[RMDB]
RNA sequence: GGGAACGACUCGAGUAGAGUCGAAAAUAAGGUCUAGCGAGCUUUCAAGGAGACAACUCUUUGAAUUCCGAACCAGUAAGCAGACUACUUGGAGUGACUGACUGUUAGCCAAAAAGCUAAUUUGAUCAAGUCUAGGCUCAUUCGUGAGCCUAGACUUAAAAGAAACAACAACAACAAC
Reactivity to DMS in 0.01 (KOAc 150mM, MgCl2 10mM, bicine 150mM(pH8.5), 24C), signal-to-noise 1, nucleotides 027 to 126: u000a080a280g000g000u000c020u000a060g000c210g010a190g000c080u000u000u000c000a010a010g010g000a020g030a110c300a090a070c030u000c000u000u010u000g010a000a000u000u020c050c060g000a100a090c080c000a040g010u000a040a160g040c230a130g000a110c040u000a020c070u000u000g020g000a090g000u000g010a010c070u000g000a080c030u000g000u010u000a020g000c000c000a050a190a040a130a270g000c000u000a000a040u000u000u000g050a090u000c070